[RMDB]
RNA sequence: GGGAACGACUCGAGUAGAGUCGAAAAGAAGACGUGACGAAAAGUCACGAAAAGAGCUGACAGGUACCGUCAGCAAAGAAAAGGUACCAAGACGGAAACGUCAGACAUCGGAGACGAUGUCAAAAGAUAAAUGCUCCUAGUUCGCUAGGAGCAUUUAAAAAGAAACAACAACAACAAC
Reactivity to DMS in 0.01 (KOAc 150mM, MgCl2 10mM, bicine 150mM(pH8.5), 24C), signal-to-noise 4, nucleotides 027 to 126: g030a180a120g030a110c010g010u010g010a010c000g000a080a040a130a220g000u000c010a000c000g000a010a050a170a110g030a150g000c000u000g000a000c000a160g000g000u010a000c000c000g000u000c000a000g050c040a050a100a180g000a060a020a040a090g000g000u000a010c000c020a180a080g010a010c030g020g030a090a060a190c000g000u010c010a130g000a000c010a030u010c000g010g000a210g040a120c000g020a030u000g010u000c000a020a040a080a120g020a140
Reactivity to 2A3 in 0.01 (KOAc 150mM, MgCl2 10mM, bicine 150mM(pH8.5), 24C), signal-to-noise 4, nucleotides 027 to 126: g180a050a020g150a040c010g000u000g000a000c010g110a100a080a050a060g010u000c000a000c000g020a010a020a000a020g110a020g000c000u000g000a010c000a120g000g000u000a000c000c000g000u010c000a000g040c050a030a020a000g060a000a020a000a010g010g000u000a000c000c000a000a020g000a000c010g000g050a080a110a000c030g000u000c010a000g000a000c000a000u010c000g060g010a060g020a090c010g000a000u010g000u000c000a000a020a000a040g110a020